[RMDB]
RNA sequence: GGGAACGACUCGAGUAGAGUCGAAAAGAUAUGGAACCUUGCGUACGUAUCCUUUCGCGAUAAGCUGCUUUCGGAAACGAAAGUCAGCUUUUGACGCGAUUCGUACGUACGCAAGGUUCCUAAGUCACAGAACAAUGUACUUCGGUACAUUGUUCUGAAAAGAAACAACAACAACAAC
Reactivity to DMS in 0.01 (KOAc 150mM, MgCl2 10mM, bicine 150mM(pH8.5), 24C), signal-to-noise 2, nucleotides 027 to 126: g010a040u010a300u010g000g000a010a000c000c000u000u010g010c000g000u000a000c000g010u000a000u010c050c060u000u000u000c000g020c010g010a170u000a030a020g010c010u000g000c000u000u000u000c010g010g000a110a090a300c010g000a010a000a000g010u010c030a000g010c000u000u010u000u000g010a230c050g020c010g000a010u000u000c080g020u000a010c010g020u000a030c000g010c000a000a010g000g010u000u000c000c000u000a000a070g000u000c050a300
Structure probing data (DMS) for a 177-nucleotide construct. The DMS profile rests on 10,234 reads. Reactivities are given for positions 27 through 126. The RNA was probed in 150 mM KOAc, 10 mM MgCl2 and 150 mM bicine (pH 8.5) at 24 C. Values are in units of 0.01, from 0 to 300, in steps of 10.